This 177-nucleotide RNA was probed chemically with 2A3 and DMS. For 2A3 the reverse transcriptase was SuperScript II with manganese. DMS adducts were read by reverse transcription with MarathonRT. The reactions ran in a buffer of 150 mM KOAc, 10 mM MgCl2 and 150 mM bicine (pH 8.5), at 24 C.
RNA sequence: GGGAACGACUCGAGUAGAGUCGAAAACGACGGGUCUUCGGACCCGUCGAAAUAAUGCGUAGCUCGCGCUACGGAGGCAUCGAGUAGGUCGAGCCACCUACAAAAGCUUCGAGUUCGCUCGAAGCAAGAUAGGUGAUUUGUUCGCAAAUCACCUAUCAAAAGAAACAACAACAACAAC
Reactivity to 2A3 in 0.01 (KOAc 150mM, MgCl2 10mM, bicine 150mM(pH8.5), 24C), signal-to-noise 3, nucleotides 027 to 126: c020g000a000c020g000g000g000u000c020u060u110c250g110g030a000c040c000c000g000u000c000g000a000a000a000u100a020a060u150g080c020g010u010a000g010c020u030c130g090c020g000c040u000a000c000g020g030a050g030g000c070a130u070c130g020a030g020u060a030g010g080u050c030g010a020g030c040c040a000c000c000u010a030c000a020a120a010a020g000c000u010u000c000g000a000g030u040u100c210g020c070u000c000g000a010a000g000c000a000a000
Reactivity to DMS in 0.01 (KOAc 150mM, MgCl2 10mM, bicine 150mM(pH8.5), 24C), signal-to-noise 3, nucleotides 027 to 126: c020g040a000c000g000g010g020u010c000u000u010c250g030g020a010c010c000c010g010u010c000g000a010a030a050u010a140a050u010g000c010g020u000a010g010c010u000c260g000c280g000c010u000a010c010g000g000a090g010g010c070a110u000c050g010a140g000u000a040g010g030u000c040g000a080g010c040c040a110c010c000u000a020c070a100a060a090a120g010c000u000u010c000g000a010g010u000u000c190g000c000u000c000g020a010a000g000c000a010a030